RNA sequence: GGGAACGACUCGAGUAGAGUCGAAAACCCUUAGCAUUCGUGCUAAGGGAAAUAACGGUCGGCUCAUGCAGCUAGUCGUAAAUGCUGCUCGACCUUUUGGUAAAAUCUGGCCGUUCGCGGCCAGAAACAAUGUGUGAUCUUUCGAGAUCACACAUUGAAAAGAAACAACAACAACAAC
Reactivity to DMS in 0.01 (KOAc 150mM, MgCl2 10mM, bicine 150mM(pH8.5), 24C), signal-to-noise 5, nucleotides 027 to 126: c000c000c000u010u010a000g010c000a020u000u010c180g040u000g030c000u000a000a000g010g000g010a010a020a040u010a060a080c200g010g000u000c000g010g000c170u020c200a080u010g000c010a020g010c010u000a180g010u010c210g010u010a090a100a080u020g010c000u000g000c000u000c020g000a030c000c010u000u000u010u010g010g010u010a090a070a120a080u000c000u000g010g000c000c000g020u000u020c180g020c010g010g010c000c000a000g010a010a070a110
Reactivity to 2A3 in 0.01 (KOAc 150mM, MgCl2 10mM, bicine 150mM(pH8.5), 24C), signal-to-noise 4, nucleotides 027 to 126: c010c000c000u010u000a010g000c000a020u010u060c200g080u050g000c000u000a000a000g000g000g020a030a110a030u130a050a020c070g000g010u010c000g030g000c060u040c260a050u220g000c000a010g000c010u060a040g190u170c090g050u070a050a040a030u160g000c000u010g000c010u020c020g010a010c000c000u020u100u020u050g060g020u130a030a020a010a100u010c000u000g000g000c020c000g000u020u060c290g010c010g080g020c000c000a000g000a000a000a000